Overview
An RNA of 207 nucleotides, treated with 2A3 and DMS and read out base by base. The 2A3 profile rests on 14,795 reads. For DMS the reverse transcriptase was MarathonRT. For 2A3 the reverse transcriptase was SuperScript II with manganese. Reactivities are rounded to 0.1 and cut off at 0 and 3.
RNA sequence: GGGAACGACUCGAGUAGAGUCGAAAAGCGUACUACUUUCUUUUGACGAAGAAAGUGGCAAGUACGAUCCCAAAUAGGAUCGUAUGAUGACCCAUUUACUUCGAUAAGAAAGUAUCGCAAACUGGAGGUUAAUGAGUUCGCUCAUUAACCUCCAGAAGUAUAAUCCAAUGUUCGCAUUGGAUUAUACAAAAGAAACAACAACAACAAC
Reactivity to 2A3 in 0.01 (KOAc 150mM, MgCl2 10mM, bicine 150mM(pH8.5), 24C), signal-to-noise 9, nucleotides 027 to 156: g000c010g040u070a080c030u000a000c010u050u000u010c020u010u100u080u140g200a130c030g000a000a010g030a010a070a020g020u050g010g000c020a160a020g010u000a000c000g000a000u000c020c020c020a190a260a070u260a070g000g000a000u000c000g010u000a000u020g140a190u140g040a090c010c000c000a010u030u020u040a110c000u000u000c010g040a060u010a070a000g010a010a000a000g010u020a030u300c000g000c020a030a040a050c000u000g000g000a000g000g000u000u000a000a010u000g000a000g040u090u140c260g080c130u000c000a000u000u000a000a000c000c000u000c000c000a000g000a000a000
Reactivity to DMS in 0.01 (KOAc 150mM, MgCl2 10mM, bicine 150mM(pH8.5), 24C), signal-to-noise 4, nucleotides 027 to 156: g000c020g000u000a080c080u000a010c000u000u000u000c010u000u000u010u010g030a300c240g010a010a010g020a100a050a060g020u000g010g020c000a060a170g000u000a010c000g000a030u000c000c000c000a080a220a240u000a040g020g010a020u000c000g050u000a020u000g010a160u010g010a120c300c010c000a080u000u000u000a100c020u010u000c010g020a220u000a030a050g010a020a020a040g010u000a030u000c040g030c030a060a080a230c010u000g000g010a030g010g010u000u000a020a010u010g000a030g030u000u010c300g030c010u000c000a020u000u000a000a010c010c000u010c000c010a000g010a020a080